[RMDB]
RNA sequence: GGGAACGACUCGAGUAGAGUCGAAAAGAUAUGGAAUCGUGAAGAGCGACGAUCAAUUGAUCGGAAACGAUCACAUUGGGAGCUCCACGAUUCCUAAGUCAAAGUGCGAUUGUUCGCAAUCGCACAACAGCUUCUACAAGUUCGCUUGUAGAAGCUGAAAAGAAACAACAACAACAAC
Reactivity to 2A3 in 0.01 (KOAc 150mM, MgCl2 10mM, bicine 150mM(pH8.5), 24C), signal-to-noise 3, nucleotides 027 to 126: g000a000u010a000u060g000g010a000a030u000c000g020u040g070a300a300g010a170g010c020g300a300c030g000a010u000c000a010a000u010u030g000a000u000c010g020g000a000a000a000c000g010a010u000c000a030c050a060u020u000g000g000g030a010g000c000u000c020c000a000c000g000a000u000u030c000c000u000a000a000g000u020c060a120a150a090g020u010g000c010g000a000u010u010g020u070u120c200g020c160a000a000u010c000g000c010a000c000a000a020
Reactivity to DMS in 0.01 (KOAc 150mM, MgCl2 10mM, bicine 150mM(pH8.5), 24C), signal-to-noise 3, nucleotides 027 to 126: g000a010u000a030u010g000g000a010a010u000c000g020u000g010a190a210g020a040g030c010g010a090c300g010a010u020c000a010a010u000u000g010a000u000c010g020g000a010a010a000c000g000a010u010c000a010c300a040u000u000g000g020g000a000g020c000u020c010c000a000c000g000a020u000u010c000c000u000a000a030g000u000c000a150a080a130g010u000g010c020g000a020u000u000g010u000u010c300g020c000a000a000u000c000g020c000a010c000a070a130